[RMDB]
Chemical mapping of a 177-nucleotide RNA with DMS and 2A3. It was measured as part of the RMDB libraries RFM100 and RFMREP. The reactions ran in a buffer of 150 mM KOAc, 10 mM MgCl2 and 150 mM bicine (pH 8.5), at 24 C.
RNA sequence: GGGAACGACUCGAGUAGAGUCGAAAAGCGUUGAACAACCGGCUCAGAACUGGAGCGGACAAGGGGAAUCCGACUGUUUAAUUAAAACAAAGCAUUGUGAUGGCCGGAGACGGUGUUGACACAAUGUCACAAGAUUGACAUUCGUGUCAAUCUUGUGAAAAGAAACAACAACAACAAC
Reactivity to DMS in 0.01 (KOAc 150mM, MgCl2 10mM, bicine 150mM(pH8.5), 24C), signal-to-noise 4, nucleotides 027 to 126: g000c100g010u010u010g020a100a070c100a140a160c030c030g000g010c010u010c060a070g000a170a100c070u000g040g000a100g010c040g000g000a030c070a070a100g040g000g000g000a160a090u000c020c020g000a100c130u020g000u020u000u000a110a150u010u030a080a030a030a090c130a040a090a120g020c030a040u000u030g000u010g010a210u010g010g010c020c010g000g020a090g010a060c070g020g000u020g000u000u010g000a120c120a000c000a010a030u000g010u010
Reactivity to 2A3 in 0.01 (KOAc 150mM, MgCl2 10mM, bicine 150mM(pH8.5), 24C), signal-to-noise 7, nucleotides 027 to 126: g040c030g020u030u070g060a080a030c020a040a050c030c020g020g000c040u050c140a080g040a110a020c020u090g020g060a040g040c010g020g000a040c060a150a130g040g020g000g030a030a050u020c010c020g040a040c050u010g050u070u080u060a140a180u070u160a050a080a020a020c080a040a070a010g030c040a050u030u050g020u020g020a090u070g040g000c000c010g020g010a020g010a020c040g010g010u040g020u030u080g050a000c000a000c000a040a020u050g030u050